[RMDB]
RNA sequence: GGGAACGACUCGAGUAGAGUCGAAAACAGGUGGGAAGGAGGAAGAGGAGGUCUCCACUGGCUCCCCAGGCAUCUCAGAGACCCCCCAUACUUAGCAUGCCUUCCGGAGGAUCCCAUUAGCAGACUACAAUGCUUCUACUUUCGAGUAGAAGCAUUGAAAAGAAACAACAACAACAAC
Reactivity to DMS in 0.01 (KOAc 150mM, MgCl2 10mM, bicine 150mM(pH8.5), 24C), signal-to-noise 5, nucleotides 027 to 126: c090a110g000g020u000g020g010g020a060a050g000g010a070g000g000a140a100g010a140g030g010a030g010g020u000c010u000c010c100a090c080u010g010g000c050u010c100c050c020c080a100g000g000c060a050u000c050u010c210a110g010a060g010a070c020c010c000c010c020c080a090u010a110c090u000u000a100g010c110a120u010g010c020c010u000u000c010c030g000g010a110g000g000a140u000c010c020c020a110u010u000a080g010c120a080g010a090c120u010a170
Reactivity to 2A3 in 0.01 (KOAc 150mM, MgCl2 10mM, bicine 150mM(pH8.5), 24C), signal-to-noise 2, nucleotides 027 to 126: c050a030g090g020u130g030g030g010a070a050g040g040a020g040g050a060a090g030a160g060g030a030g000g010u010c000u010c000c030a080c070u040g020g000c020u110c090c060c010c010a010g030g000c010a070u040c060u030c080a030g010a050g000a130c010c000c010c000c010c000a040u110a110c040u040u060a030g050c020a030u070g020c000c000u030u000c010c000g000g000a040g020g010a030u010c010c010c030a020u060u110a030g080c070a000g000a130c030u070a040